[RMDB]
RNA sequence: GGGAACGACUCGAGUAGAGUCGAAAAUCCGAUCGAUCCGGUGCGGGCGGCUUGGGAGAGCCUUCCUCACGGAUCCUCAAGGGGAGAACCACCGAUGGAGAACACCCUCCUCAUCGGACUGUCGCGGCGAUGUCCUUUGCUUCGGCAAAGGACAUCGAAAAGAAACAACAACAACAAC
Reactivity to 2A3 in 0.01 (KOAc 150mM, MgCl2 10mM, bicine 150mM(pH8.5), 24C), signal-to-noise 2, nucleotides 027 to 126: u010c000c000g040a090u120c060g000a010u020c000c010g190g150u010g000c030g010g010g000c030g000g000c000u080u050g060g090g040a070g000a000g040c000c000u010u030c010c000u000c010a010c010g000g000a010u010c020c000u040c000a110a100g010g010g020g000a050g020a030a050c040c010a080c030c020g010a040u040g080g000a020g020a120a030c030a070c040c000c010u000c010c020u020c000a040u010c030g010g080a050c040u130g050u050c070g010c030g100g020
Reactivity to DMS in 0.01 (KOAc 150mM, MgCl2 10mM, bicine 150mM(pH8.5), 24C), signal-to-noise 1, nucleotides 027 to 126: u010c000c070g000a010u010c260g000a010u010c000c000g000g030u020g070c120g040g000g000c300g030g000c010u010u040g010g000g030a280g000a030g000c000c010u000u000c000c010u040c000a010c040g030g000a000u000c000c140u000c060a010a170g020g000g000g020a130g040a130a100c110c020a190c000c000g000a000u040g070g020a060g000a150a150c080a130c030c040c080u020c000c000u000c030a000u020c000g010g000a180c030u000g000u000c000g000c030g000g000
An RNA of 177 nucleotides, treated with 2A3 and DMS and read out base by base. 2A3 adducts were read by reverse transcription with SuperScript II with manganese. For DMS, 911 sequencing reads were counted.